[RMDB]
RNA sequence: GGGAACGACUCGAGUAGAGUCGAAAAAGAGGAUAUGUCUCAAUUUGUUCUGCAUUAAUGCCACAGUGGGGAUGGAGGCCGGGCCGUGGCCAGAGCAGAUACGUAGGCCCAUGAAAUUGAUGAACUGCAGUAUGUAGCACUUCGGUGCUACAUACUGAAAAGAAACAACAACAACAAC
Reactivity to 2A3 in 0.01 (KOAc 150mM, MgCl2 10mM, bicine 150mM(pH8.5), 24C), signal-to-noise 4, nucleotides 027 to 126: a000g130a050g020g040a070u110a060u280g110u020c030u000c030a080a070u090u040u020g020u020u010c020u010g010c000a060u020u270a180a070u200g010c020c030a040c020a040g040u070g060g030g040g030a040u120g030g040a060g050g060c060c010g010g000g010c000c030g050u010g000g000c000c020a000g010a000g020c030a010g000a030u100a070c090g050u050a060g080g000c020c000c000a030u090g070a040a040a040u120u150g040a070u040g020a130a000c020u050g000
Reactivity to DMS in 0.01 (KOAc 150mM, MgCl2 10mM, bicine 150mM(pH8.5), 24C), signal-to-noise 3, nucleotides 027 to 126: a110g010a080g000g010a130u000a090u030g020u000c030u000c000a120a070u000u000u010g040u000u000c020u000g010c080a110u010u010a060a140u020g000c010c060a030c050a100g010u000g010g000g010g000a110u010g010g000a070g000g000c040c030g000g000g000c060c060g000u010g020g020c020c070a070g000a080g020c050a060g030a070u020a050c030g020u010a070g020g020c000c010c030a100u020g020a040a080a110u020u020g020a110u020g000a060a060c120u000g000
Chemical mapping of a 177-nucleotide RNA with 2A3 and DMS.
Values cover nucleotides 27 to 126.
The data come from the RNA Mapping Database (RMDB), libraries RFM100 and RFMREP.
High 2A3 reactivity points to a flexible backbone, as in loops and unpaired stretches.
Conditions: 150 mM KOAc, 10 mM MgCl2 and 150 mM bicine (pH 8.5), 24 C.